[RMDB]
RNA sequence: GGGAACGACUCGAGUAGAGUCGAAAAACGGUGCGGAAGUUCGCGCUUCCGUGAAACGCGAAAACCGGACGGUGGCUGCAAGUCGCAUCGCAAAACCGCGGCAAGUGGAGUUAGCGAGAGGAGGCUGAAACCAUCCAACACUUCGGUGUUGGAUGAACCAAAGUAAGCGUUUCGACGCUUACUUUGGAAAAGAAACAACAACAACAAC
Reactivity to DMS in 0.01 (KOAc 150mM, MgCl2 10mM, bicine 150mM(pH8.5), 24C), signal-to-noise 1, nucleotides 027 to 156: a030c000g010g030u000g030c020g000g010a130a030g040u000u000c260g030c300g040c010u000u030c000c060g020u010g030a090a160a060c010g000c000g020a030a030a150a060c010c030g000g000a000c030g000g050u000g010g300c040u010g010c050a050a100g040u000c100g010c010a240u000c050g000c030a140a030a130a060c050c030g000c040g000g000c070a140a110g000u000g000g060a100g020u010u000a100g050c070g010a060g000a060g010g020a170g010g000c000u000g000a000a120a190c110c000a060u000c020c000a020a000c000a030c000u000u000c300g030g000u000g010u020u000g000g000a030u000g010a000a070
Reactivity to 2A3 in 0.01 (KOAc 150mM, MgCl2 10mM, bicine 150mM(pH8.5), 24C), signal-to-noise 1, nucleotides 027 to 156: a000c020g040g020u030g000c010g000g010a000a050g040u040u120c080g020c030g000c050u060u000c020c000g020u030g050a070a070a010c060g010c020g110a060a020a010a120c040c000g000g000a000c020g030g030u020g040g000c040u080g020c080a070a000g030u050c030g000c020a070u000c000g030c030a000a010a000a150c050c000g020c000g030g070c060a090a070g020u060g000g030a050g020u060u100a030g020c030g020a040g020a020g020g020a030g000g040c010u020g050a080a010a010c020c000a000u010c000c000a000a000c010a000c000u050u160c260g070g000u020g000u010u000g000g010a000u010g020a010a010
Chemical mapping of a 207-nucleotide RNA with DMS and 2A3. Reactivities are given for positions 27 through 156. 2A3 adducts were read by reverse transcription with SuperScript II with manganese. It was measured as part of the RMDB library M2RFPK. High 2A3 reactivity points to a flexible backbone, as in loops and unpaired stretches. For 2A3, 1,222 sequencing reads were counted. For DMS the reverse transcriptase was MarathonRT.